[RMDB]
RNA sequence: GGGAACGACUCGAGUAGAGUCGAAAAAUCGAGCCUGGUCGGAACAUAACGACGGCGGGCCGGUGGGGAAUCAGGGGGCUACCGUGGGAUAGCGAUGAGACAGCCCCUCCGAUGGCACCAAGCGUCGCACACUGGCCAUACUUCGGUAUGGCCAGAACAAUAUUUGUCAAUUCGUUGACAAAUAUUGAAAAGAAACAACAACAACAAC
Reactivity to DMS in 0.01 (KOAc 150mM, MgCl2 10mM, bicine 150mM(pH8.5), 24C), signal-to-noise 2, nucleotides 027 to 156: a080u000c030g040a050g030c000c010u000g040g040u000c020g040g000a080a300c130a170u000a080a130c000g030a080c020g080g020c010g000g000g030c020c050g000g010u000g000g000g010g000a150a030u020c060a120g000g010g020g040g020c020u000a030c030c010g030u000g010g040g000a120u010a040g030c050g030a080u010g020a160g020a130c020a130g000c000c000c000c020u000c020c010g000a090u000g020g060c030a070c060c020a030a220g000c060g000u000c010g000c030a110c140a140c000u010g010g000c000c000a030u000a000c000u000u010c270g060g050u000a020u010g000g010c000c000a000g000a010a130
Reactivity to 2A3 in 0.01 (KOAc 150mM, MgCl2 10mM, bicine 150mM(pH8.5), 24C), signal-to-noise 3, nucleotides 027 to 156: a000u030c020g000a010g020c000c010u110g090g000u010c010g050g020a150a110c070a200u250a120a050c060g040a000c020g040g030c000g000g010g020c010c000g000g020u080g000g020g000g020a070a090u120c040a110g030g010g000g050g010c020u050a050c020c020g050u070g010g100g020a070u110a080g050c030g020a040u080g010a050g020a040c010a030g000c000c030c000c010u000c020c020g030a030u060g080g000c050a030c060c030a090a030g060c010g020u030c010g020c020a040c000a000c040u000g000g000c000c000a000u000a000c010u030u030c140g030g000u000a010u010g000g000c000c000a000g010a000a000